[RMDB]
RNA sequence: GGGAACGACUCGAGUAGAGUCGAAAAGAUAUGGAAGUACGGGAGAAGUGUUCGGAAACGAACAUACUUCAUCGAUCGUGUUCCUAAGUCAAAGCUUGACUAUUGGGUUCGCCCAAUAGUCAAGCAAGUUGAAAUUUAAGUUCGCUUAAAUUUCAACAAAAGAAACAACAACAACAAC
Reactivity to 2A3 in 0.01 (KOAc 150mM, MgCl2 10mM, bicine 150mM(pH8.5), 24C), signal-to-noise 2, nucleotides 027 to 126: g010a030u080a040u130g000g020a030a010g150u170a010c030g020g030g000a040g010a040a010g020u000g010u020u010c010g000g020a040a050a030c010g000a000a000c010a020u120a040c010u010u020c020a240u270c030g060a050u060c010g000u010g050u010u020c010c000u030a230a010g040u030c070a170a050a020g000c000u000u000g000a000c000u000a010u000u000g000g040g040u040u090c210g070c030c000c000a000a000u000a000g000u010c000a000a010g000c000a000a000
Reactivity to DMS in 0.01 (KOAc 150mM, MgCl2 10mM, bicine 150mM(pH8.5), 24C), signal-to-noise 6, nucleotides 027 to 126: g010a030u000a300u010g000g010a020a030g020u010a030c010g010g000g000a070g000a030a020g010u000g010u000u010c010g010g010a080a070a190c000g010a010a000c010a060u010a060c020u000u010c020a230u010c130g000a100u010c010g010u000g000u000u000c010c000u010a050a170g010u000c020a070a120a140g000c000u000u000g000a020c000u000a000u000u000g010g000g000u000u010c240g010c010c000c000a010a000u000a000g000u000c000a000a000g010c000a010a010
Structure probing data (2A3 and DMS) for a 177-nucleotide construct. The data come from the RNA Mapping Database (RMDB), library TTRDEL. Reactivities are given for positions 27 through 126.